[RMDB]
RNA sequence: GGGAACGACUCGAGUAGAGUCGAAAAUCGCCCCGAAAUGAGGACUCCGGGGUCCCCUUCCGAAGGAACGGAGGGGGGUGACUAGGAAUCAGGAUCCAGUGGAUCCGUGGGAAUUAUCCCGUUCCACCCUCGACUAUAAGUUCGCUUAUAGUCGAGGAAAAGAAACAACAACAACAAC
Reactivity to DMS in 0.01 (KOAc 150mM, MgCl2 10mM, bicine 150mM(pH8.5), 24C), signal-to-noise 1, nucleotides 027 to 126: u000c210g000c070c000c000c050g000a040a110a130u010g010a090g010g000a070c080u000c050c010g000g000g000g020u010c000c000c000c000u000u000c000c010g010a190a190g010g030a140a140c030g010g000a050g000g000g000g000g000g010u000g010a050c120u000a090g020g000a030a020u000c060a150g010g010a010u000c000c020a260g010u020g000g010a000u000c000c000g010u000g000g000g010a110a060u000u030a120u000c000c000c010g000u000u000c000c000a150c180
Reactivity to 2A3 in 0.01 (KOAc 150mM, MgCl2 10mM, bicine 150mM(pH8.5), 24C), signal-to-noise 2, nucleotides 027 to 126: u070c020g020c000c000c040c000g080a020a020a180u150g020a090g080g020a020c010u060c040c000g000g050g030g040u050c010c000c010c000u010u000c010c010g120a160a110g180g110a160a190c010g000g000a020g010g000g030g000g000g000u020g050a040c020u030a050g010g050a020a030u040c010a020g000g000a000u000c000c020a090g180u150g090g010a010u000c000c010g030u090g010g010g060a020a000u120u000a050u100c000c020c000g000u010u000c010c020a060c010